[RMDB]
RNA sequence: GGGAACGACUCGAGUAGAGUCGAAAAGAACGCCGGGGCAUCGUCUGGCAGGACGAACGCACCGGACGCCUGGAAAUGCUCGGCACCGCCGUGCCCGCGCCCACCGUGGCAGCCAGCAUCGCCGCCGAGGGAAGAAGAAAUUCGUUUCUUCUUCCCUAAAAGAAACAACAACAACAAC
Reactivity to DMS in 0.01 (KOAc 150mM, MgCl2 10mM, bicine 150mM(pH8.5), 24C), signal-to-noise 9, nucleotides 027 to 126: g010a120a220c080g010c010c010g000g000g000g050c010a110u000c010g010u000c000u000g020g030c300a140g000g000a020c010g000a020a080c140g020c000a030c000c010g000g000a020c030g010c070c010u000g010g010a070a080a070u000g010c010u000c070g020g000c040a110c090c070g000c060c060g010u000g000c030c020c080g010c080g020c020c040c020a060c110c120g010u000g000g020c020a080g010c020c030a050g000c050a050u000c200g010c020c040g020c050c070g000
Reactivity to 2A3 in 0.01 (KOAc 150mM, MgCl2 10mM, bicine 150mM(pH8.5), 24C), signal-to-noise 4, nucleotides 027 to 126: g060a100a020c050g010c010c000g000g000g010g000c010a010u010c020g030u010c010u040g200g110c140a100g080g020a000c000g000a120a060c090g000c010a010c000c000g000g000a010c010g030c000c020u030g050g060a050a140a060u120g000c020u010c060g020g000c020a050c070c090g040c010c030g020u040g020c000c030c010g030c010g010c010c000c000a060c020c040g040u100g020g010c020a020g020c020c000a010g010c010a050u040c030g010c020c000g020c030c010g030